[RMDB]
RNA sequence: GGGAACGACUCGAGUAGAGUCGAAAAAGACGUCCUUACGAGGACGUCAACGUUGAGCCACACGCACAAUACAUGUGGAUUCAGUUUUGUUCGUUCGGCUCGCGUUAGCUGGAGUACGCUCCAGCAAGGUGGCAAAAUAAUUCGUUAUUUUGCCACCAAAAGAAACAACAACAACAAC
Reactivity to DMS in 0.01 (KOAc 150mM, MgCl2 10mM, bicine 150mM(pH8.5), 24C), signal-to-noise 6, nucleotides 027 to 126: a080g010a000c010g010u000c000c000u000u000a120c200g020a040g000g010a020c000g010u000c000a010a010c010g010u000u030g030a010g010c000c000a100c160a010c010g000c090a030c010a010a000u000a010c020a100u010g050u010g010g010a110u020u010c030a030g000u000u000u000u000g010u000u000c000g010u000u000c230g010g000c000u000c000g010c000g010u000u010a100g000c000u000g000g000a020g010u020a170c280g010c000u000c000c000a010g000c000a040a040
Reactivity to 2A3 in 0.01 (KOAc 150mM, MgCl2 10mM, bicine 150mM(pH8.5), 24C), signal-to-noise 9, nucleotides 027 to 126: a000g010a000c000g010u010c000c000u030u020a080c300g080a020g000g000a000c000g000u000c000a000a000c000g020u060u300g010a000g000c010c000a040c000a000c040g020c010a000c000a000a020u040a050c160a300u060g050u110g230g110a100u170u170c010a010g000u010u010u020u020g000u010u020c000g000u010u040c070g000g000c000u000c000g000c000g000u030u040a020g000c000u000g000g000a000g000u030a060c240g020c070u000c000c000a000g000c000a000a020

Chemical mapping of a 177-nucleotide RNA with DMS and 2A3. Reactivities are given for positions 27 through 126. The RNA was probed in 150 mM KOAc, 10 mM MgCl2 and 150 mM bicine (pH 8.5) at 24 C. Reactivities are rounded to 0.1 and cut off at 0 and 3.